This 177-nucleotide RNA was probed chemically with 2A3 and DMS. 2A3 adducts were read by reverse transcription with SuperScript II with manganese. The data come from the RNA Mapping Database (RMDB), library TTRDES. The reactions ran in a buffer of 150 mM KOAc, 10 mM MgCl2 and 150 mM bicine (pH 8.5), at 24 C. The DMS profile rests on 3,897 reads.

RNA sequence: GGGAACGACUCGAGUAGAGUCGAAAAAAAGAUAUGGAGCAGUUGGAGAUCUGGAUAGCGAAGAACGCAAUUCGGAAACGAAUUGCGGGAGCUGACCAGAUCUAUGAAGACUGCUCCUAAGUCAAAAGCUUAACACUUAGUUCGCUAAGUGUUAAGCAAAAGAAACAACAACAACAAC
Reactivity to 2A3 in 0.01 (KOAc 150mM, MgCl2 10mM, bicine 150mM(pH8.5), 24C), signal-to-noise 1, nucleotides 027 to 126: a000a000a040g040a010u070a030u150g000g000a000g010c000a020g020u030u030g080g040a300g020a080u000c000u030g020g030a070u020a020g020c020g180a300a000g000a050a010c000g000c000a020a000u010u000c010g000g000a050a010a000c000g000a010a000u000u000g000c000g000g000g000a010g000c000u000g010a020c000c000a040g000a010u020c000u000a040u010g000a000a010g000a010c010u010g000c010u010c000c000u000a000a000g000u000c000a180a000a060a000
Reactivity to DMS in 0.01 (KOAc 150mM, MgCl2 10mM, bicine 150mM(pH8.5), 24C), signal-to-noise 3, nucleotides 027 to 126: a100a070a080g000a040u000a300u000g010g000a020g020c000a020g000u000u010g010g000a020g010a010u000c000u020g000g010a130u010a020g040c000g030a060a170g010a160a160c010g010c000a000a010u000u000c010g010g000a040a050a150c000g000a010a000u000u000g000c000g000g000g000a050g010c000u000g010a040c020c010a000g010a000u000c000u000a050u030g000a100a240g000a000c010u000g020c000u000c000c000u000a010a060g000u010c020a060a080a100a150